[RMDB]
RNA sequence: GGGAACGACUCGAGUAGAGUCGAAAACACUUUGAUCAAAAGGUAAAGCAAGGUUCGAUUGAUUCAGACUUUUGUAAAAUAUUUCAUCAUCCAACUUUAGCAUGACAUCAUGCGAUGAGAUCAUGCUAAACGAAACUGGAUUUACACUUUGAUCAAAUAUCCUCUGCUAAUUCGUUAGCAGAGGAUAAAAAGAAACAACAACAACAAC
Reactivity to 2A3 in 0.01 (KOAc 150mM, MgCl2 10mM, bicine 150mM(pH8.5), 24C), signal-to-noise 8, nucleotides 027 to 156: c060a010c030u020u010u010g010a000u000c010a010a010a020a030g020g000u010a010a020a030g030c070a020a020g020g020u060u050c050g030a070u020u230g050a070u150u110c080a060g040a110c030u120u190u200u190g090u140a040a110a100a070u150a130u070u190u130c060a050u030c010a020u010c050c040a030a040c060u000u000u010a000g000c000a000u000g010a010c000a040u030c030a030u210g220c140g190a110u030g020a020g020a040u010c000a000u000g000c000u000a000a000a010c050g020a070a050a060c030u030g010g010a000u000u000u030a010c080a010c010u010u010u010g000a000u000c010a000a010a010
Reactivity to DMS in 0.01 (KOAc 150mM, MgCl2 10mM, bicine 150mM(pH8.5), 24C), signal-to-noise 2, nucleotides 027 to 156: c080a140c140u000u010u010g010a010u000c030a030a040a020a050g010g030u000a030a050a060g000c030a120a070g020g020u000u000c000g010a110u000u020g020a040u000u010c040a090g010a060c060u000u000u000u020g020u000a110a070a100a090u000a040u000u020u000c030a020u000c010a050u010c040c090a060a010c100u010u000u000a000g000c000a010u010g000a020c030a090u000c000a060u010g020c190g020a090u010g020a060g030a090u000c040a010u000g010c020u000a010a000a060c040g010a060a020a050c030u010g000g010a120u000u000u000a020c010a060c010u000u000u000g020a050u010c000a030a030a100
Structure probing data (2A3 and DMS) for a 207-nucleotide construct.
The reactions ran in a buffer of 150 mM KOAc, 10 mM MgCl2 and 150 mM bicine (pH 8.5), at 24 C.
2A3 adducts were read by reverse transcription with SuperScript II with manganese.
The data come from the RNA Mapping Database (RMDB), library OK3TST.
High DMS reactivity at an A or C suggests that its Watson-Crick edge is free.
For 2A3, 7,154 sequencing reads were counted.